An RNA of 177 nucleotides, treated with DMS and 2A3 and read out base by base. In probing experiments dimethyl sulfate is read out at A N1 and C N3, which are open when not base-paired. For 2A3 the reverse transcriptase was SuperScript II with manganese.
RNA sequence: GGGAACGACUCGAGUAGAGUCGAAAAUAACGCUUCAACAACAGGCCGUAGCCCAAAUCUUGCUUAGCCUUACUGAAUGCUUCACGCACAGCUGGAUCAGUAUUACCUGAACGUAAUUUUUCCAGCAUGGACAGCUAUUGUUCGCAAUAGCUGUCCAAAAAGAAACAACAACAACAAC
Reactivity to DMS in 0.01 (KOAc 150mM, MgCl2 10mM, bicine 150mM(pH8.5), 24C), signal-to-noise 1, nucleotides 027 to 126: u000a020a110c150g030c060u000u000c050a070a020c070a050a080c220a050g000g020c000c070g000u020a080g000c000c110c070a050a140a090u020c040u020u000g010c060u000u000a110g000c020c010u000u020a090c130u000g040a040a040u010g000c020u000u040c140a050c130g020c060a070c150a060g020c000u000g000g020a050u000c070a060g040u000a030u000u000a050c000c040u000g010a070a110c170g000u040a000a050u000u000u000u000u000c000c000a000g040c020a110
Reactivity to 2A3 in 0.01 (KOAc 150mM, MgCl2 10mM, bicine 150mM(pH8.5), 24C), signal-to-noise 1, nucleotides 027 to 126: u130a090a110c080g010c020u130u050c050a140a090c010a010a030c020a080g010g030c060c100g270u050a030g000c000c000c010a060a120a060u150c110u050u060g020c010u000u110a020g020c040c010u040u050a020c050u100g050a040a060u090g010c020u140u120c050a090c120g080c000a040c020a140g020c000u010g020g000a010u050c000a070g240u150a010u000u040a050c050c080u130g050a130a030c020g000u010a000a050u000u000u010u000u010c000c020a050g000c020a000
The reactions ran in a buffer of 150 mM KOAc, 10 mM MgCl2 and 150 mM bicine (pH 8.5), at 24 C.